[RMDB]
RNA sequence: GGGAACGACUCGAGUAGAGUCGAAAAAGGAUCAAAUGCACUAAACGAAACUGAAACAAGCGAUCGAAAAUAUCCCUUUGGGAUUCUUGACUCGAUAAGUCUAUUAUUUUCAGAGAAAAAAUAUUCAUAUGCUCACAUAAUUCGUUAUGUGAGCAUAAAAAGAAACAACAACAACAAC
Reactivity to DMS in 0.01 (KOAc 150mM, MgCl2 10mM, bicine 150mM(pH8.5), 24C), signal-to-noise 2, nucleotides 027 to 126: a050g020g000a060u010c090a090a140a090u010g010c060a070c060u000a060a080a060c120g000a120a090a180c090u000g000a100a060a080c170a080a100g000c230g020a040u010c010g000a040a060a110a070u000a070u000c010c010c010u020u000u000g020g010g000a020u000u000c110u000u010g040a150c080u000c020g010a040u010a060a110g010u010c010u010a050u000u010a140u000u000u000u000c010a030g020a140g020a000a020a060a050a070a070u010a040u000u000c070a140
Record summary:
Chemical mapping of a 177-nucleotide RNA with DMS. The RNA was probed in 150 mM KOAc, 10 mM MgCl2 and 150 mM bicine (pH 8.5) at 24 C. High DMS reactivity at an A or C suggests that its Watson-Crick edge is free.